RNA sequence: GGGAACGACUCGAGUAGAGUCGAAAACGUUUAGUUCGGAUGAGCCGCGCCAUCGUUAAAAACGCGGAAGCCAACUGGUGGGAGUAAAAUACCAUCUGGGGGCUAAAAGGCUCGUAAGCGCAGGGUACACUGACUACUCAUUCGUGAGUAGUCAGUGAAAAGAAACAACAACAACAAC
Reactivity to 2A3 in 0.01 (KOAc 150mM, MgCl2 10mM, bicine 150mM(pH8.5), 24C), signal-to-noise 3, nucleotides 027 to 126: c020g000u070u100u060a170g010u120u080c050g040g020a050u020g010a030g040c000c000g000c000g020c030c030a020u030c060g110u130u060a060a000a000a000a000c010g000c020g010g000a020a000g000c010c010a020a060c000u000g020g010u000g010g020g010a050g040u150a020a050a060a030u140a050c000c000a010u000c000u000g000g000g000g000g000c000u020a050a100a000a000g030g020c000u060c090g100u070a100a000g030c040g000c090a100g020g020g000u030a010
Reactivity to DMS in 0.01 (KOAc 150mM, MgCl2 10mM, bicine 150mM(pH8.5), 24C), signal-to-noise 3, nucleotides 027 to 126: c050g000u010u000u010a070g020u010u020c070g010g010a020u000g010a100g010c000c000g000c020g020c070c030a040u000c030g020u010u070a010a010a040a020a040c010g000c060g000g010a060a040g020c010c000a000a020c010u010g000g010u000g000g000g000a060g010u030a080a070a080a150u020a070c000c000a000u000c000u000g020g010g000g000g000c000u000a020a050a070a040g010g010c030u000c020g000u010a060a040g010c020g020c090a090g000g010g010u020a200